[RMDB]
RNA sequence: GGGAACGACUCGAGUAGAGUCGAAAAAUUACGGGCGGCGCAGGUGGAGCUGCGAACCCUCCGCCCAUCGCGUGCUCUCUCGGUGGCCCAGACGCUGCAAACGGACAGGCGGGCCACCUGCAACGAAAUAGUUGUUAACGUUCGCGUUAACAACUAUAAAAGAAACAACAACAACAAC
Reactivity to 2A3 in 0.01 (KOAc 150mM, MgCl2 10mM, bicine 150mM(pH8.5), 24C), signal-to-noise 2, nucleotides 027 to 126: a000u150u110a070c090g000g000g020c010g000g010c020g000c010a010g000g020u090g040g170a090g050c050u060g050c030g000a060a080c000c010c030u020c010c000g000c000c000c000a040u090c020g040c030g030u030g020c010u010c000u000c000u040c140g010g010u010g000g010c040c000c020a050g040a080c180g030c170u010g000c030a160a190a150c070g070g110a080c000a020g030g030c000g000g000g000c000c000a000c000c000u010g010c010a030a040c010g100a140a000
Reactivity to DMS in 0.01 (KOAc 150mM, MgCl2 10mM, bicine 150mM(pH8.5), 24C), signal-to-noise 3, nucleotides 027 to 126: a060u010u010a150c120g000g010g010c020g010g000c050g030c270a030g000g010u000g010g000a100g020c030u000g020c020g000a070a100c040c100c010u000c010c010g000c010c000c060a080u010c090g030c050g020u010g010c020u000c040u000c040u000c110g010g010u020g010g020c000c000c010a130g030a100c090g000c010u000g000c040a070a120a190c300g010g000a260c010a020g000g010c050g000g010g000c000c010a000c010c010u010g020c060a070a090c090g000a100a120

Annotation: This 177-nucleotide RNA was probed chemically with 2A3 and DMS. Values are in units of 0.01, from 0 to 300, in steps of 10. The RNA was probed in 150 mM KOAc, 10 mM MgCl2 and 150 mM bicine (pH 8.5) at 24 C. 2A3 adducts were read by reverse transcription with SuperScript II with manganese.